[RMDB]
RNA sequence: GGGAACGACUCGAGUAGAGUCGAAAACUGGUUCUAAAUCACGUGAAGCAACACGCAACCGAUGCUUGGCCUCGGUGAUGAUGGUGGCCAUGUUGCUCAGCGUCAGCCUUCAUCGAAUCGGGACGUCAGACUCUCGACAGUUCGCUGUCGAGAGUCUAAAAGAAACAACAACAACAAC
Reactivity to 2A3 in 0.01 (KOAc 150mM, MgCl2 10mM, bicine 150mM(pH8.5), 24C), signal-to-noise 1, nucleotides 027 to 126: c010u050g100g000u130u000c020u080a040a150a190u080c100a000c060g030u010g070a060a000g000c080a010a040c010a020c050g000c050a030a030c050c000g070a040u150g050c030u040u130g170g010c030c000u000c020g030g060u070g040a100u130g010a020u170g050g030u030g030g000c000c060a090u070g090u000u070g000c050u000c150a090g010c000g040u020c000a010g010c020c000u040u050c020a050u100c000g010a080a010u040c000g030g000g000a020c020g040u110c100
Reactivity to DMS in 0.01 (KOAc 150mM, MgCl2 10mM, bicine 150mM(pH8.5), 24C), signal-to-noise 2, nucleotides 027 to 126: c030u000g010g010u000u000c040u000a110a180a090u000c060a120c120g000u000g010a180a060g000c030a070a080c120a070c100g000c050a150a030c160c070g010a040u000g010c010u000u020g130g060c010c050u000c020g000g020u010g000a040u000g000a080u000g000g000u000g000g000c030c040a060u000g050u000u000g000c100u010c060a150g020c080g000u000c090a190g000c130c030u020u000c000a050u000c030g000a090a060u020c070g000g000g000a060c110g000u020c070